RNA sequence: GGGAACGACUCGAGUAGAGUCGAAAAUUCAGGCAUCAUUAGAUCAUCUAUAGAGUUGAUAAAUGGAAGUUGAUUGUGCAGCACCCAGGAUUUCUAGUAUAAGCCAAACAUCCCUACUGGAGGGUGUUAGAACAAACUUGUUCGCAAGUUUGUUCUAAAAAGAAACAACAACAACAAC
Reactivity to DMS in 0.01 (KOAc 150mM, MgCl2 10mM, bicine 150mM(pH8.5), 24C), signal-to-noise 2, nucleotides 027 to 126: u000u000c090a110g040g000c020a100u020c050a030u020u000a150g010a070u000c080a040u010c030u020a150u000a180g000a100g030u000u000g010a080u000a070a070a090u000g010g010a050a160g010u020u000g010a090u000u000g010u000g020c030a080g030c070a030c030c020c020a110g000g000a090u000u010u010c050u010a080g000u000a040u020a060a100g000c010c040a070a030a010c110a030u000c000c000c000u000a050c090u000g010g010a060g000g000g020u000g020u000